[RMDB]
RNA sequence: GGGAACGACUCGAGUAGAGUCGAAAACCAGGCAGGGAAUGAUGCUGGGAAGUGUUUACCCCACAGGCUCUGUGCCUUCUCUGACUGGGCAGCUCAUGCUGUAUGCAUGGAGGCAUCAUUACCAAAAGCUACUAGUGCACUUCGGUGCACUAGUAGCAAAAGAAACAACAACAACAAC
Reactivity to DMS in 0.01 (KOAc 150mM, MgCl2 10mM, bicine 150mM(pH8.5), 24C), signal-to-noise 2, nucleotides 027 to 126: c010c010a080g010g000c100a050g000g000g000a020a020u000g000a020u000g030c050u020g020g000g000a060a090g000u000g000u000u000u010a140c150c020c060c040a030c200a060g020g010c000u000c080u000g030u020g010c000c050u000u000c050u010c030u000g000a070c030u000g000g020g000c080a080g010c020u020c100a030u010g000c020u000g030u010a060u010g030c030a010u000g000g010a140g000g000c030a030u000c070a060u010u010a090c070c000a080a090a110a150
Reactivity to 2A3 in 0.01 (KOAc 150mM, MgCl2 10mM, bicine 150mM(pH8.5), 24C), signal-to-noise 3, nucleotides 027 to 126: c010c010a000g050g030c040a010g010g000g030a040a010u030g050a050u050g040c020u020g030g040g020a080a050g050u060g120u190u200u250a200c000c010c030c000a010c000a030g120g000c010u020c090u210g090u130g040c010c000u050u030c020u040c000u000g080a100c030u020g000g030g000c020a010g000c000u110c080a060u200g020c000u070g050u290a130u200g040c010a000u040g000g290a060g060g000c000a010u030c000a010u050u080a070c020c010a060a030a020a040
Annotation:
Structure probing data (DMS and 2A3) for a 177-nucleotide construct. For 2A3, 2,309 sequencing reads were counted. The reactions ran in a buffer of 150 mM KOAc, 10 mM MgCl2 and 150 mM bicine (pH 8.5), at 24 C. Source: RMDB library OK2TST, as collected in RNAgym. Reactivities are rounded to 0.1 and cut off at 0 and 3. The DMS profile rests on 1,626 reads.